[RMDB]
RNA sequence: GGGAACGACUCGAGUAGAGUCGAAAACGUCUAGCGUUCGCGCUAGACGAAAGUAGCAACAUGUCAAAUCUCGCAGACAUGUAAGCUACAAAUGCGAGAAAAAAACUAGGAGCUUCGGCUCCUAGAAGGUAAUUACAAAGUUCGCUUUGUAAUUACCAAAAGAAACAACAACAACAAC
Reactivity to DMS in 0.01 (KOAc 150mM, MgCl2 10mM, bicine 150mM(pH8.5), 24C), signal-to-noise 3, nucleotides 027 to 126: c040g000u010c000u010a010g020c000g030u000u010c230g040c000g020c000u000a010g000a010c000g010a010a010a130g010u000a020g010c010a170a070c000a000u000g010u000c010a100a080a110u000c080u000c090g010c060a180g000a000c000a000u000g010u000a060a070g020c020u000a020c060a040a040a050u000g000c050g010a080g010a000a000a050a070a070a060a180c010u000a000g000g010a010g020c000u000u010c160g030g010c000u000c000c000u000a000g010a040a050
Reactivity to 2A3 in 0.01 (KOAc 150mM, MgCl2 10mM, bicine 150mM(pH8.5), 24C), signal-to-noise 5, nucleotides 027 to 126: c000g000u000c000u010a000g000c000g020u030u050c300g000c000g020c080u000a000g000a000c000g000a000a000a010g030u030a000g000c010a010a010c000a010u000g010u020c020a030a080a250u060c090u040c120g070c060a030g000a010c000a000u010g000u010a030a080g020c000u040a030c030a010a100a020u160g020c030g000a030g000a100a110a040a020a000a010a040c000u010a000g000g010a010g000c000u060u090c240g100g000c000u000c000c000u000a000g000a000a000